[RMDB]
RNA sequence: GGGAACGACUCGAGUAGAGUCGAAAAGAUGAGAUUGACCGUAUCCGAGAAGUUAACUACCUAACAGGUGAAGUGUUGAAAGAAAGAGAACAUUUUGCGAUAUUCCCAGCUUCUCACUUCGUAACACCGAACACGAAAGGUUCGCCUUUCGUGUUCGAAAAGAAACAACAACAACAAC
Reactivity to DMS in 0.01 (KOAc 150mM, MgCl2 10mM, bicine 150mM(pH8.5), 24C), signal-to-noise 3, nucleotides 027 to 126: g000a090u000g020a060g020a100u040u000g000a060c060c010g000u030a120u020c080c100g020a090g000a070a080g020u020u010a090a110c100u020a110c030c100u000a120a070c260a070g000g000u030g000a030a030g020u000g000u000u000g000a060a060a030g010a090a130a100g000a050g030a120a020c080a070u000u010u010u010g000c060g020a100u000a080u020u000c000c040c030a180g020c010u000u010c000u000c020a170c080u010u030c040g010u020a040a110c110a120c090
Reactivity to 2A3 in 0.01 (KOAc 150mM, MgCl2 10mM, bicine 150mM(pH8.5), 24C), signal-to-noise 5, nucleotides 027 to 126: g070a090u290g020a070g030a120u100u200g070a100c040c030g060u090a040u080c050c060g010a010g000a050a020g010u040u130a100a080c050u140a140c070c050u070a180a050c030a120g000g080u020g010a040a040g010u040g070u110u100g130a120a100a060g140a020a090a010g130a030g000a020a020c020a020u050u060u050u090g030c060g060a040u010a090u120u000c000c000c010a000g000c010u000u000c010u000c000a060c010u070u090c070g050u070a090a000c000a060c050